[RMDB]
RNA sequence: GGGAACGACUCGAGUAGAGUCGAAAAGCAUUAGGUGAUUCAGCUCGGCUUGCGCCUGCCCGCCCAGCUCCGGGCCGGUCAGGGUAAAGUCAUCAACCAGCUGGGCCAGGGCCUCGACGUGCGCCACGCGCUGCUCGUGUUUCGACACGAGCAGCGCAAAAGAAACAACAACAACAAC
Reactivity to 2A3 in 0.01 (KOAc 150mM, MgCl2 10mM, bicine 150mM(pH8.5), 24C), signal-to-noise 1, nucleotides 027 to 126: g050c000a010u050u140a000g000g040u030g070a170u080u140c000a000g000c000u020c030g070g000c020u000u160g040c120g030c000c000u030g040c000c000c030g110c000c000c000a060g000c090u070c060c110g010g090g080c240c040g000g000u130c000a000g010g060g030u060a090a000a000g170u020c000a030u140c000a050a020c050c030a000g000c000u000g000g000g060c090c030a000g000g010g010c000c000u050c030g040a040c080g120u200g000c060g000c060c020a110c020